[RMDB]
RNA sequence: GGGAACGACUCGAGUAGAGUCGAAAAGAUAUGGAUCCAUUGGUGGGAGCACUAGGUCGGAAACGACCUACGUGCGAGGAUCACUGUGGAUCCUAAGUCAAACGUACCGUCGUUCGCGACGGUACGAGGUCAUAUACCCCUUCGGGGGUAUAUGACCAAAAGAAACAACAACAACAAC
Reactivity to 2A3 in 0.01 (KOAc 150mM, MgCl2 10mM, bicine 150mM(pH8.5), 24C), signal-to-noise 1, nucleotides 027 to 126: g000a020u020a040u100g000g010a010u020c020c020a010u100u300g040g000u020g000g190g030a300g010c030a010c000u020a010g000g000u000c000g000g030a010a020a000c000g010a000c000c020u020a030c060g010u030g010c010g010a030g020g050a170u090c000a000c020u040g000u040g040g000a000u010c020c000u010a000a000g000u020c080a120a000a000c030g010u000a000c020c050g010u000c000g010u030u120c300g000c000g120a000c020g020g000u010a000c000g010a000